[RMDB]
RNA sequence: GGGAACGACUCGAGUAGAGUCGAAAACUCUAGCUUACUUUAGUAAGAAUACAGUGUAUAAUACACAUAACAUACAAAAUAUGUGUUAAUCAACUAUGUUAUUGGUAAGGCUUCUGGUCAGCAGUAGGCUAUUAGGUAUGUUUUUGGGGAAUGAAAACUAUAUCUGCCGUUUCGACGGCAGAUAUAGAAAAGAAACAACAACAACAAC
Reactivity to 2A3 in 0.01 (KOAc 150mM, MgCl2 10mM, bicine 150mM(pH8.5), 24C), signal-to-noise 2, nucleotides 027 to 156: c010u020c050u040a050g010c000u010u010a000c000u270u220u060a080g040u050a070a030g020a080a020u150a090c090a050g000u030g040u070a030u050a180a190u160a030c020a000c000a020u040a090a000c060a040u300a080c020a040a030a090a080u070a040u060g050u010g010u030u120a020a120u100c040a080a070c000u120a070u160g060u190u040a090u040u170g000g020u040a030a040g040g000c010u050u010c000u110g000g040u050c080a000g010c000a020g030u050a040g030g000c020u000a030u020u090a000g030g020u090a070u210g020u050u020u020u110u070g070g020g010g050a000a040u170g050a070a220a000a010